[RMDB]
RNA sequence: GGGAACGACUCGAGUAGAGUCGAAAACAUGUUGCGGACGUUGCGUCUCGAUUUCGAGGGCAAACAACACAGUGGAAUUGACGACUCCCGAAACAUUGCGCGUAUCCUCAUCGAGUUGAUGCGCCGCUAGUACCUAGUCGUUCGCGACUAGGUACUAAAAAGAAACAACAACAACAAC
Reactivity to DMS in 0.01 (KOAc 150mM, MgCl2 10mM, bicine 150mM(pH8.5), 24C), signal-to-noise 3, nucleotides 027 to 126: c060a100u010g020u000u000g000c100g000g010a120c220g030u010u000g010c020g010u000c000u010c010g020a300u000u010u010c090g010a040g000g000g030c010a020a080a040c080a090a080c070a060c070a070g030u000g010g000a060a080u000u000g030a080c150g010a140c060u000c000c000c010g010a120a120a040c150a050u010u020g020c050g010c070g010u000a020u000c000c000u000c010a110u000c200g000a060g020u000u000g000a040u000g020c010g000c040c030g040c090
Reactivity to 2A3 in 0.01 (KOAc 150mM, MgCl2 10mM, bicine 150mM(pH8.5), 24C), signal-to-noise 3, nucleotides 027 to 126: c050a050u150g040u070u070g090c110g120g060a080c060g030u040u060g010c030g140u070c020u000c010g130a160u110u240u240c040g000a050g000g010g000c010a070a080a000c020a050a010c010a020c020a040g070u080g050g090a060a080u070u080g060a040c030g010a040c010u010c000c000c000g000a030a040a010c140a080u170u220g010c030g010c020g040u030a020u030c010c020u030c040a270u160c200g040a040g030u000u090g100a020u010g040c040g010c000c030g000c030